About this RNA
Conditions: 150 mM KOAc, 10 mM MgCl2 and 150 mM bicine (pH 8.5), 24 C. This 177-nucleotide RNA was probed chemically with 2A3 and DMS. The 2A3 profile rests on 893 reads. Reactivities are given for positions 27 through 126. For DMS, 2,126 sequencing reads were counted.
RNA sequence: GGGAACGACUCGAGUAGAGUCGAAAAGGAUUUGGGGAAGUUUGAGAUCAAGGCACCUACAGAUUACAUGUUAGAUAAGGGCUCCCUGCUUCAUAGAUGGCAUCUUCCUGCUGUUUUUCAUGUGGCACUGAUCUUUGCAUUUCGAUGCAAAGAUCAGAAAAGAAACAACAACAACAAC
Reactivity to 2A3 in 0.01 (KOAc 150mM, MgCl2 10mM, bicine 150mM(pH8.5), 24C), signal-to-noise 1, nucleotides 027 to 126: g100g030a090u010u080u150g000g010g000g040a040a060g060u060u070u100g090a060g030a000u130c050a000a040g030g000c020a000c000c020u070a090c040a030g060a070u080u080a010c060a070u060g050u220u120a040g030a090u120a140a120g030g080g000c010u010c070c030c010u010g000c000u090u100c020a050u090a090g060a060u070g010g030c000a030u040c020u120u040c000c030u030g020c020u030g010u100u020u070u000u030c080a080u070g020u060g090g000c030a010
Reactivity to DMS in 0.01 (KOAc 150mM, MgCl2 10mM, bicine 150mM(pH8.5), 24C), signal-to-noise 2, nucleotides 027 to 126: g000g000a080u000u010u000g010g010g010g000a050a100g020u010u000u000g010a140g000a110u000c110a100a090g010g000c070a030c070c010u000a090c100a100g010a080u020u010a110c070a070u000g000u010u000a070g010a090u000a060a100g000g020g010c020u000c060c040c020u000g000c020u000u000c050a080u000a070g010a060u010g010g000c000a080u000c070u000u000c090c050u010g000c050u010g010u000u000u000u020u020c100a070u000g010u000g000g000c070a100